[RMDB]
RNA sequence: GGGAACGACUCGAGUAGAGUCGAAAAAAGUCCAUAUGCCCACCUUCGCUGCUACGGGUGGAUGCUUAUACAUGCUAUGGAUGCCUACAUUUGAAAUAAUGUAGAUGCCUAAUACUCUCUCUCAGGGAGAGAGUUUAGAUGCCUCCAAAGUAGAUGCACUGGUAUAUCCAUUCGUGGAUAUACCAGUAAAAGAAACAACAACAACAAC
Reactivity to DMS in 0.01 (KOAc 150mM, MgCl2 10mM, bicine 150mM(pH8.5), 24C), signal-to-noise 1, nucleotides 027 to 156: a060a110g000u000c010c020a100u010a120u020g000c000c000c000a050c010c030u000u000c120g020c020u010g050c040u000a080c060g010g060g080u020g010g000a090u010g010c050u010u000a110u010a060c100a110u000g030c060u010a170u000g010g020a030u000g010c070c000u000a000c010a010u000u020u000g000a130a130a110u000a020a000u000g010u010a000g030a150u000g000c030c010u030a040a070u000a030c000u000c000u000c000u000c010u010c170a300g020g020g010a020g020a050g020a010g000u000u000u000a000g020a100u000g000c020c000u000c010c030a050a130a090g000u000a050g000a200u000g000c100
Reactivity to 2A3 in 0.01 (KOAc 150mM, MgCl2 10mM, bicine 150mM(pH8.5), 24C), signal-to-noise 2, nucleotides 027 to 156: a000a000g070u000c020c010a020u040a030u180g020c010c020c000a010c010c020u090u070c070g020c050u100g030c040u060a020c030g000g010g000u010g000g000a030u120g000c000u070u120a070u020a140c080a090u180g020c000u060a070u090g000g010a000u020g000c000c010u000a000c000a000u010u030u070g150a130a130a050u180a030a010u060g000u000a020g010a070u100g040c000c000u050a060a010u130a060c000u030c010u020c000u000c000u000c140a150g040g300g000a000g000a000g000a000g000u000u000u000a000g000a010u070g010c020c040u010c020c020a080a060a030g020u020a030g020a060u070g000c030

Conditions: 150 mM KOAc, 10 mM MgCl2 and 150 mM bicine (pH 8.5), 24 C.
The record gives the reactivity of an RNA of 207 nucleotides to DMS and 2A3.
The DMS profile rests on 2,277 reads.
For 2A3 the reverse transcriptase was SuperScript II with manganese.
DMS adducts were read by reverse transcription with MarathonRT.
Reactivities are rounded to 0.1 and cut off at 0 and 3.